[RMDB]
RNA sequence: GGGAACGACUCGAGUAGAGUCGAAAACGACGACGAUGUCGACAGCCUCUUUCGUGAAAUCGUCGACGACGGUCAGGCACUUCACGCGCCGGCCGUUGGAAAGCGCAUCCAUCACGAAAUCGAUUGAACCCCGACGUAUAUUCGUAUACGUCGGGGUAAAAGAAACAACAACAACAAC
Reactivity to 2A3 in 0.01 (KOAc 150mM, MgCl2 10mM, bicine 150mM(pH8.5), 24C), signal-to-noise 2, nucleotides 027 to 126: c020g020a000c010g080a040c100g110a100u300g030u010c010g060a080c020a050g040c020c000u020c020u030u040u000c020g010u000g010a220a140a030u030c010g070u000c020g020a040c000g010a000c000g010g010u040c010a250g040g000c020a010c040u280u270c180a070c170g060c000g000c010c010g010g000c000c010g000u000u010g000g020a030a020a000g010c000g000c050a000u020c070c000a010u040c000a000c000g020a010a020a030u160c070g130a110u010u090g080a110
Reactivity to DMS in 0.01 (KOAc 150mM, MgCl2 10mM, bicine 150mM(pH8.5), 24C), signal-to-noise 1, nucleotides 027 to 126: c080g000a040c070g000a130c140g020a040u000g000u000c000g030a050c160a060g010c000c000u000c070u000u000u000c000g000u010g000a000a100a030u000c010g000u010c010g010a300c040g020a010c010g010g000u000c000a090g020g000c010a020c010u000u000c240a100c170g010c010g010c000c010g000g000c010c040g000u000u000g010g000a060a080a070g000c020g000c130a030u010c010c120a030u000c000a000c050g010a020a010a020u020c070g000a160u010u000g050a070